An RNA of 177 nucleotides, treated with 2A3 and DMS and read out base by base. It was measured as part of the RMDB library TTRDEL. Values cover nucleotides 27 to 126. For DMS, 4,571 sequencing reads were counted. For DMS the reverse transcriptase was MarathonRT. The RNA was probed in 150 mM KOAc, 10 mM MgCl2 and 150 mM bicine (pH 8.5) at 24 C.
RNA sequence: GGGAACGACUCGAGUAGAGUCGAAAAGAUAUGGAGUCUUCGAUAAGCCUGACAUCGGAAACGAUGUAGGCUUUUGACGAAGGUCUCCUAAGUCAAAGCGUAUUGAUUCUUCGGAAUCAAUACGCAAGACUAAAGGCAGGUUCGCCUGCCUUUAGUCAAAAGAAACAACAACAACAAC
Reactivity to 2A3 in 0.01 (KOAc 150mM, MgCl2 10mM, bicine 150mM(pH8.5), 24C), signal-to-noise 1, nucleotides 027 to 126: g020a010u040a040u110g000g010a010g000u000c010u010u000c000g050a100u060a300a020g000c010c010u020g220a070c020a000u020c000g020g010a070a000a010c010g010a020u020g000u010a000g000g000c000u030u030u010u040g010a010c000g000a000a000g000g100u060c020u010c000c000u000a080a020g020u020c040a110a060a070g000c010g010u010a000u000u000g010a010u020u000c000u030u070c300g030g000a000a000u010c030a000a000u010a000c010g000c000a000a000
Reactivity to DMS in 0.01 (KOAc 150mM, MgCl2 10mM, bicine 150mM(pH8.5), 24C), signal-to-noise 3, nucleotides 027 to 126: g010a030u000a280u010g000g000a020g010u000c000u000u000c000g000a160u000a040a050g020c010c000u000g010a030c000a010u000c000g010g000a080a080a130c000g020a020u000g010u000a020g010g000c000u000u000u000u000g010a180c100g010a020a010g000g000u000c000u000c000c000u000a010a080g000u000c050a120a120a150g010c000g010u010a000u000u000g000a000u000u000c000u000u020c240g020g000a020a010u000c000a000a000u010a000c010g010c000a000a020